[RMDB]
RNA sequence: GGGAACGACUCGAGUAGAGUCGAAAAUUCUUACGAACUUGGCGGAACGACGAAAGAUAGUGGGGGCCUCACAGAAUACGGGUAAAGUAUAAUGAAACCGUACCAGAGAUUCAACCCUGUGCAGUGUUUAGAGCAAUCCAUUCGUGGAUUGCUCUAAAAAAGAAACAACAACAACAAC
Reactivity to 2A3 in 0.01 (KOAc 150mM, MgCl2 10mM, bicine 150mM(pH8.5), 24C), signal-to-noise 1, nucleotides 027 to 126: u030u000c020u120u080a120c260g020a010a000c000u000u030g000g000c030g040g060a120a040c000g060a000c000g030a090a000a130g080a020u030a010g140u090g000g000g000g000g050c000c090u150c000a000c000a000g150a170a050u020a020c000g090g030g000u010a080a130a000g120u050a100u090a170a210u090g020a110a040a040c000c000g080u000a040c000c020a040g000a000g000a070u200u000c000a060a000c000c010c000u170g020u000g000c020a030g020u010g080u140
Reactivity to DMS in 0.01 (KOAc 150mM, MgCl2 10mM, bicine 150mM(pH8.5), 24C), signal-to-noise 2, nucleotides 027 to 126: u040u000c040u000u010a100c200g000a020a130c080u030u020g000g030c000g000g000a080a090c080g020a120c060g050a040a100a070g000a110u000a090g040u020g000g000g000g000g010c080c040u000c000a120c010a120g000a060a070u000a000c030g000g000g000u010a050a100a070g010u000a020u040a000a120u070g020a020a090a130c040c000g000u030a000c110c050a050g000a050g030a110u000u000c080a120a220c070c030c060u010g000u020g010c040a050g000u000g040u000